[RMDB]
RNA sequence: GGGAACGACUCGAGUAGAGUCGAAAAAAAGCCCCGGUGGCGAUAUCACCCUGGUUGGCAAAGCCCGUACUGAAAUUGCCGGUGUUGUAGAAGCCCGUGUUGAAGUCGCCCAGGUUGGCGAUGCCGGUAUAUCGUGUCCGUUCGCGGACACGAUAUAAAAAGAAACAACAACAACAAC
Reactivity to DMS in 0.01 (KOAc 150mM, MgCl2 10mM, bicine 150mM(pH8.5), 24C), signal-to-noise 1, nucleotides 027 to 126: a080a040a060g000c040c000c000c030g040g030u020g000g000c010g000a130u010a060u060c070a050c040c010c020u000g000g020u010u030g010g010c000a080a100a180g000c010c000c040g000u040a110c110u020g000a050a090a050u010u000g000c000c020g040g000u000g020u000u060g010u000a060g000a130a120g010c070c020c010g000u000g050u010u000g010a090a180g020u010c030g000c020c010c030a100g000g020u020u040g000g010c050g000a010u010g000c040c000g000g000